[RMDB]
RNA sequence: GGGAACGACUCGAGUAGAGUCGAAAAAACAUGGGAAGAUCACUGCCAAUUUUCAAGACCUUCUCCUAUUGGUUAUCUCGGCUUAUUGUCACAAAGAACAAGAGACAUUUAUAUCAGUAGGAGGCUGUCCCGAGAGUUUAUUCGUAAACUCUCGGGAAAAAGAAACAACAACAACAAC
Reactivity to 2A3 in 0.01 (KOAc 150mM, MgCl2 10mM, bicine 150mM(pH8.5), 24C), signal-to-noise 4, nucleotides 027 to 126: a000a000c050a050u080g020g000g020a030a000g000a060u140c070a010c070u110g040c010c000a090a130u090u040u040u040c130a150a080g020a140c000c000u040u010c000u000c000c000u000a010u000u010g010g000u040u020a060u010c010u050c090g040g050c050u060u130a290u300u000g060u050c030a070c110a200a130a080g070a180a020c010a060a050g000a000g020a010c040a020u060u120u050a240u050a000u060c000a000g020u020a010g030g000a000g000g000c010u010g090
Reactivity to DMS in 0.01 (KOAc 150mM, MgCl2 10mM, bicine 150mM(pH8.5), 24C), signal-to-noise 1, nucleotides 027 to 126: a030a050c110a080u030g000g000g000a040a000g100a040u050c010a080c000u020g010c010c060a090a100u000u000u000u000c060a040a060g020a140c060c050u010u000c000u010c030c000u000a060u030u000g000g040u030u000a000u010c010u000c060g010g000c000u020u000a040u030u010g000u030c050a080c130a030a040a110g020a140a030c030a060a100g000a000g000a020c080a000u000u000u000a030u010a030u000c000a020g000u000a020g020g040a010g000g000c300u030g000

Record summary: Conditions: 150 mM KOAc, 10 mM MgCl2 and 150 mM bicine (pH 8.5), 24 C. This 177-nucleotide RNA was probed chemically with 2A3 and DMS. Source: RMDB library OK1LIB, as collected in RNAgym. DMS adducts were read by reverse transcription with MarathonRT. For 2A3 the reverse transcriptase was SuperScript II with manganese. High 2A3 reactivity points to a flexible backbone, as in loops and unpaired stretches.